Chemical mapping of a 177-nucleotide RNA with 2A3. Source: RMDB library OK1LIB, as collected in RNAgym.
[RMDB]
RNA sequence: GGGAACGACUCGAGUAGAGUCGAAAAUUGAGUCGUCCUUCACACCAAUCUCUGUGGUCUCUUCGUCGUUCACAGUGACGGUGUCACACUUGGGACUCGCUGCGUGCCCUCGCCUCGUAGAAGGAUACGGCUGCAUGGGUUUCGACCCAUGCAGCCGAAAAGAAACAACAACAACAAC
Reactivity to 2A3 in 0.01 (KOAc 150mM, MgCl2 10mM, bicine 150mM(pH8.5), 24C), signal-to-noise 1, nucleotides 027 to 126: u030u160g000a010g010u020c020g010u010c020c030u140u060c050a030c000a010c040c000a140a100u070c000u000c020u060g000u000g000g000u010c040u000c070u260u070c080g180u000c030g010u000u030c000a000c050a080g020u020g060a090c080g110g000u000g000u000c000a050c030a020c040u050u020g000g000g000a020c000u000c000g000c000u040g080c030g060u090g030c020c040c000u040c000g000c010c000u000c010g090u100a000g010a230a040g020g090a110u110a180

The 2A3 profile rests on 668 reads. Conditions: 150 mM KOAc, 10 mM MgCl2 and 150 mM bicine (pH 8.5), 24 C.